The record gives the reactivity of an RNA of 207 nucleotides to 2A3. For 2A3, 861 sequencing reads were counted. For 2A3 the reverse transcriptase was SuperScript II with manganese. The RNA was probed in 150 mM KOAc, 10 mM MgCl2 and 150 mM bicine (pH 8.5) at 24 C. Source: RMDB library RNAMAK, as collected in RNAgym.
RNA sequence: GGGAACGACUCGAGUAGAGUCGAAAAGCCUUCGUUCGCGAAGGCGAAACGCGUACUACAAGUUGCCCAAUGGCAGCUUGGACCCGUCUCCCAAAUAGGAGACGGCUAGCUGCAUUGGGAACUCUUGUAUCGCUAACUGGGCACGUUCGCGUGCCAAUCCCAAUGGGGAGUUCGCUCCCCAUUGGGAAAAAGAAACAACAACAACAAC
Reactivity to 2A3 in 0.01 (KOAc 150mM, MgCl2 10mM, bicine 150mM(pH8.5), 24C), signal-to-noise 2, nucleotides 027 to 156: g020c000c000u000u000c000g000u000u060c260g010c000g090a000a020g010g000c000g000a010a000a010c110g000c000g040u070a110c030u000a000c030a060a000g070u190u110g300c000c000c000a000a000u130g200g010c040a030g000c000u020u220g050g030a140c000c060c000g000u010c000u010c000c060c020a280a300a000u210a090g000g000a000g000a000c000g000g000c000u010a000g000c000u020g040c000a000u000u010g010g000g020a030a030c000u000c000u000u020g000u020a040u300c000g000c000u000a030a000c100u160g000g010g010c020a000c000g000u120u110c220g000c000g090u100g010c110c000a000a030